[RMDB]
RNA sequence: GGGAACGACUCGAGUAGAGUCGAAAAGAUAUGGAUCCUCCUACCCACCGUGUCGGUGAUGUGACCCAGUGGGUACUCGGAAACGAGUAUAGCUGCACAUCACCGACACGAGGGAGGAUCCUAAGUCGAAAUUCAUCUACUUCGGUAGAUGAAUUUCAAAAGAAACAACAACAACAAC
Reactivity to 2A3 in 0.01 (KOAc 150mM, MgCl2 10mM, bicine 150mM(pH8.5), 24C), signal-to-noise 3, nucleotides 027 to 126: g210a100u300a200u300g010g010a000u000c010c010u000c030c010u230a300c050c010c020a000c000c000g000u000g010u000c010g020g020u020g000a000u000g030u060g080a220c100c080c030a010g000u070g050g300g000u010a000c000u000c000g050g030a080a100a080c020g000a000g040u020a010u020a020g020c020u050g040c000a020c000a010u000c020a000c020c000g000a010c000a000c020g010a010g010g000g000a000g060g000a000u000c000c000u000a010a000g110u070c110
Reactivity to DMS in 0.01 (KOAc 150mM, MgCl2 10mM, bicine 150mM(pH8.5), 24C), signal-to-noise 2, nucleotides 027 to 126: g010a090u010a160u000g010g000a010u000c000c000u000c020c000u000a210c010c020c020a300c150c000g000u000g010u000c000g020g040u000g050a010u010g000u000g000a250c300c300c120a010g020u000g020g030g030u000a000c010u000c000g000g000a080a050a210c000g000a020g000u000a000u000a300g020c040u020g040c030a030c030a000u000c010a010c000c000g000a010c000a000c000g000a010g000g000g020a000g010g000a010u000c020c000u000a000a090g000u000c130
An RNA of 177 nucleotides, treated with 2A3 and DMS and read out base by base. The reactions ran in a buffer of 150 mM KOAc, 10 mM MgCl2 and 150 mM bicine (pH 8.5), at 24 C. Source: RMDB library TTRINS, as collected in RNAgym. The 2A3 profile rests on 4,993 reads.